[RMDB]
Structure probing data (2A3 and DMS) for a 177-nucleotide construct. The RNA was probed in 150 mM KOAc, 10 mM MgCl2 and 150 mM bicine (pH 8.5) at 24 C. The DMS profile rests on 1,725 reads. For DMS the reverse transcriptase was MarathonRT.
RNA sequence: GGGAACGACUCGAGUAGAGUCGAAAAUCAGUUUCGAGAUACCCCACCCAAUACGAUUGAUGUCGAAACUGGGGUAUACACCCAAGGAACGUCUGCCAAGCAGUACGACGAACAUAAUGAAGUCCGACAAAAUGCUACCUUUCGAGGUAGCAUUUUGAAAAGAAACAACAACAACAAC
Reactivity to 2A3 in 0.01 (KOAc 150mM, MgCl2 10mM, bicine 150mM(pH8.5), 24C), signal-to-noise 2, nucleotides 027 to 126: u050c050a020g040u100u000u040c110g040a090g000a070u100a120c020c060c010c000a020c020c020c020a090a060u180a100c050g030a060u030u300g110a140u200g000u050c050g040a040a020a070c060u050g000g020g000g060u070a030u010a090c070a140c020c010c010a010a020g030g020a050a080c010g010u030c000u010g020c000c060a160a070g070c010a070g030u100a030c020g000a030c050g020a050a020c030a060u280a170a090u150g060a100a030g090u000c030c070g020a050
Reactivity to DMS in 0.01 (KOAc 150mM, MgCl2 10mM, bicine 150mM(pH8.5), 24C), signal-to-noise 3, nucleotides 027 to 126: u000c060a020g000u010u000u000c020g020a060g000a070u010a090c050c000c050c000a120c080c070c040a110a100u000a090c140g010a100u000u010g010a090u010g020u000c010g020a040a040a050c090u000g000g000g000g000u010a060u000a080c230a160c000c010c010a150a080g020g000a090a170c040g010u000c010u000g000c010c080a180a150g010c110a010g010u000a030c120g010a060c030g010a040a100c060a030u000a080a100u010g020a150a080g010u000c010c020g030a290